[RMDB]
Source information: An RNA of 177 nucleotides, treated with 2A3 and read out base by base.
RNA sequence: GGGAACGACUCGAGUAGAGUCGAAAAGAAGGCGAAUGCUUUUAAUUUUAACACACAUUUACAUACUCUCUCUAAGAGUUAGUACGAGAAAAUCCUGAAAUACUCUAAGAGUACUAACAUACAACAAACUCACUGAGGGUUUCGACCCUCAGUGAGUAAAAGAAACAACAACAACAAC
Reactivity to 2A3 in 0.01 (KOAc 150mM, MgCl2 10mM, bicine 150mM(pH8.5), 24C), signal-to-noise 2, nucleotides 027 to 126: g000a010a020g020g030c150g000a210a080u170g060c010u030u030u000u000a190a000u190u120u020u260a200a000c010a020c000a030c000a090u090u130u000a040c030a020u030a070c000u000c000u000c000u000c000u090a050a040g010a000g140u000u000a000g000u050a000c010g000a050g040a180a090a050a110u170c000c000u080g020a000a000a070u070a000c000u000c090u210a050a040g080a000g060u000a000c000u030a000a010c000a010u200a170c000a110a000c000a050a080
Reactivities are rounded to 0.1 and cut off at 0 and 3.